[RMDB]
An RNA of 177 nucleotides, treated with 2A3 and DMS and read out base by base. 2A3 adducts were read by reverse transcription with SuperScript II with manganese. Values cover nucleotides 27 to 126. The reactions ran in a buffer of 150 mM KOAc, 10 mM MgCl2 and 150 mM bicine (pH 8.5), at 24 C. The data come from the RNA Mapping Database (RMDB), library RFM100. As a SHAPE reagent, 2A3 marks flexible, mostly unpaired nucleotides at the ribose 2'-OH.
RNA sequence: GGGAACGACUCGAGUAGAGUCGAAAAAUUAGUAUUACGACGCUAGAGCUGAAAUUCUUGGACCGUCGUAAGACUACCUUAAGCGAAAGCAUUUGCCAAAGAUGUUUUCAUUAAUCAAGAACGAAAGACCCUUCGGUAAUUUCGAUUACCGAAGGGUAAAAGAAACAACAACAACAAC
Reactivity to 2A3 in 0.01 (KOAc 150mM, MgCl2 10mM, bicine 150mM(pH8.5), 24C), signal-to-noise 3, nucleotides 027 to 126: a000u150u060a000g010u000a010u020u000a000c010g000a000c000g040c060u040a000g000a000g030c150u240g110a170a030a000u100u000c000u010u020g030g060a070c060c020g010u000c000g000u000a000a000g000a000c000u110a130c000c000u070u060a050a020g120c020g130a000a000a000g000c010a000u000u020u130g180c110c160a170a210a010g000a000u010g000u000u030u020u000c040a050u050u070a020a140u100c140a030a070g180a130a040c090g060a290a000a000g100
Reactivity to DMS in 0.01 (KOAc 150mM, MgCl2 10mM, bicine 150mM(pH8.5), 24C), signal-to-noise 1, nucleotides 027 to 126: a110u080u000a000g000u000a010u000u020a000c000g020a080c000g010c030u000a050g010a010g000c100u020g020a140a130a120u000u000c010u020u000g000g000a120c300c000g010u000c000g020u000a000a000g000a030c000u000a030c060c010u000u010a030a100g040c080g040a000a000a000g000c010a000u000u000u000g010c190c190a160a080a060g000a030u000g000u010u000u000u000c000a050u030u000a030a070u070c130a030a220g000a110a050c110g000a100a080a110g000